Record summary: Structure probing data (DMS and 2A3) for a 177-nucleotide construct. The RNA was probed in 150 mM KOAc, 10 mM MgCl2 and 150 mM bicine (pH 8.5) at 24 C. It was measured as part of the RMDB library OK2TRN. For 2A3, 2,240 sequencing reads were counted. DMS adducts were read by reverse transcription with MarathonRT.
[RMDB]
RNA sequence: GGGAACGACUCGAGUAGAGUCGAAAAGGAGGGCACUUCCGCAGGAGGGAGGACUAAAGGAAGAGGAAAGGGCGGCGCAAAGAAGGAGGUGCUGCGUCGCCAAGGUGGCAUCCUCGGCUCCGCCCCGGUAAACACAAGACUUCGGUCUUGUGUUUACAAAAGAAACAACAACAACAAC
Reactivity to DMS in 0.01 (KOAc 150mM, MgCl2 10mM, bicine 150mM(pH8.5), 24C), signal-to-noise 2, nucleotides 027 to 126: g020g030a120g020g020g000c070a100c020u000u010c050c040g000c150a070g010g000a120g000g000g010a070g000g020a110c100u010a040a100a130g010g010a030a060g030a120g000g010a050a100a150g010g000g030c030g020g000c010g030c020a070a080a120g000a100a090g000g000a050g000g000u010g010c080u000g000c000g040u000c020g000c050c090a020a020g030g020u000g020g070c030a100u000c010c020u000c050g000g010c040u000c010c030g020c070c000c000c050g000
Reactivity to 2A3 in 0.01 (KOAc 150mM, MgCl2 10mM, bicine 150mM(pH8.5), 24C), signal-to-noise 1, nucleotides 027 to 126: g090g020a020g020g030g000c050a020c040u080u040c050c040g050c080a080g060g040a060g040g060g030a020g010g000a000c020u130a050a030a070g060g000a060a020g010a030g000g020a060a110a010g040g020g000c020g040g000c000g000c010a120a150a030g150a030a060g070g020a030g050g020u040g000c040u010g000c010g040u020c000g000c000c000a000a010g040g000u020g000g000c010a030u070c000c000u040c020g050g020c030u010c000c040g000c020c000c000c000g000